[RMDB]
RNA sequence: GGGAACGACUCGAGUAGAGUCGAAAAAUUGGGUACCAGUCUCGAAAAAUAAGUCACCGAUGCUUCGCUUCGUUUCCAUCGUGCUUAUCCUCUCGAGGACGGAUAUUCUGAAUACGGGGUUUGAAGCGGUACGGGCAUCCUUCGGGAUGCCCGUACCAAAAGAAACAACAACAACAAC
Reactivity to 2A3 in 0.01 (KOAc 150mM, MgCl2 10mM, bicine 150mM(pH8.5), 24C), signal-to-noise 1, nucleotides 027 to 126: a000u150u150g000g000g040u040a040c000c000a010g060u130c060u000c000g100a160a000a000a000a000u300a020a120g260u260c120a110c010c050g020a000u130g050c000u060u000c000g100c100u040u040c000g100u010u040u100c030c070a000u070c010g020u060g060c000u000u010a000u080c000c000u120c050u050c050g060a010g010g030a070c020g000g020a000u000a040u040u010c010u010g070a000a000u200a150c000g000g110g000g000u070u130u150g050a020a000g000c000

The record gives the reactivity of an RNA of 177 nucleotides to 2A3. For 2A3 the reverse transcriptase was SuperScript II with manganese. For 2A3, 312 sequencing reads were counted. Source: RMDB library OK1LIB, as collected in RNAgym.